[RMDB]
RNA sequence: GGGAACGACUCGAGUAGAGUCGAAAAAGGCAUUAUUACAUUUGGAUCGCAAUGAAAUAUUUGAAAAAAUAAUGCGUUUAGAAAUGAAUGUCAAUCAACUUUCAAAGGAAACUUCAGAAUUAAAGGCCGUAUCAUUUAACUUCGGUUAAAUGAUACGAAAAGAAACAACAACAACAAC
Reactivity to 2A3 in 0.01 (KOAc 150mM, MgCl2 10mM, bicine 150mM(pH8.5), 24C), signal-to-noise 6, nucleotides 027 to 126: a000g040g000c010a020u020u050a040u090u110a040c030a040u000u060u030g060g030a020u050c020g020c120a090a090u240g100a080a070a030u130a070u050u090u080g050a070a090a000a010a000a000u030a000a030u020g000c010g000u000u020u130a090g050a020a090a000u020g030a020a010u070g030u040c020a030a080u020c020a040a160c040u160u240u140c150a140a070a040g100g000a100a080a020c000u040u010c050a090g060a230a080u130u150a200a100a040g090g010c020
Reactivity to DMS in 0.01 (KOAc 150mM, MgCl2 10mM, bicine 150mM(pH8.5), 24C), signal-to-noise 3, nucleotides 027 to 126: a060g020g010c000a010u010u000a030u020u000a300c020a060u020u000u000g000g000a270u000c020g010c160a070a140u080g010a070a050a300u010a030u000u000u000g000a010a020a130a080a000a000u000a010a040u000g000c000g010u030u020u010a080g010a040a050a050u000g000a080a040u030g000u010c060a040a030u050c070a040a070c080u000u000u000c060a070a060a040g020g020a050a040a030c040u010u010c050a040g010a070a080u020u020a090a080a130g000g000c160